[RMDB]
RNA sequence: GGGAACGACUCGAGUAGAGUCGAAAAAACAUAUUAAUCGAUGUCAAAGAAUUACUAUAAUGCUCCCACGGAGCAAAAAGAAGUUAUUUGUGCAUUUGAUAUAGGUGCAAAAAAUCCUGCAAGAACAAUUAUUGAGGUAUAUAACAACAAUUCAAUAAUAAUGUGACAAAUUCGUUUGUCACAUUAUAAAAGAAACAACAACAACAAC
Reactivity to DMS in 0.01 (KOAc 150mM, MgCl2 10mM, bicine 150mM(pH8.5), 24C), signal-to-noise 1, nucleotides 027 to 156: a020a000c010a110u010a110u000u000a050a050u000c010g010a030u000g030u000c000a080a040a120g030a090a020u010u010a280c040u000a220u000a130a240u030g010c010u010c010c000c130a140c140g040g030a070g000c020a000a010a080a080a100g000a270a090g010u000u010a010u010u000u000g060u000g000c010a090u000u000u000g040a040u000a130u030a050g010g030u000g020c010a010a030a060a210a170a030u000c050c010u000g010c110a010a130g010a060a070c040a060a050u000u000a040u010u010g000a090g060g020u000a050u000a090u000a050a090c070a060a080c030a050a080u000u000c010a040a050u020a060
Reactivity to 2A3 in 0.01 (KOAc 150mM, MgCl2 10mM, bicine 150mM(pH8.5), 24C), signal-to-noise 2, nucleotides 027 to 156: a010a000c070a050u150a060u130u150a080a060u030c020g010a020u020g000u030c020a010a100a050g060a110a100u090u010a020c010u010a020u060a280a100u080g010c010u010c010c030c070a070c210g030g000a000g020c000a000a070a030a030a000g100a030a010g040u080u100a020u060u040u020g020u020g030c010a000u030u010u300g010a000u020a010u030a140g010g010u030g000c060a000a000a110a040a030a100u030c000c000u010g070c070a060a060g050a080a050c030a030a100u140u100a030u070u110g040a040g030g040u110a050u050a030u080a160a000c030a010a010c000a020a130u100u030c000a000a000u100a040
An RNA of 207 nucleotides, treated with DMS and 2A3 and read out base by base. Reactivities are given for positions 27 through 156. 2A3 adducts were read by reverse transcription with SuperScript II with manganese. DMS adducts were read by reverse transcription with MarathonRT. Conditions: 150 mM KOAc, 10 mM MgCl2 and 150 mM bicine (pH 8.5), 24 C. For DMS, 1,540 sequencing reads were counted. Source: RMDB library OK3TST, as collected in RNAgym.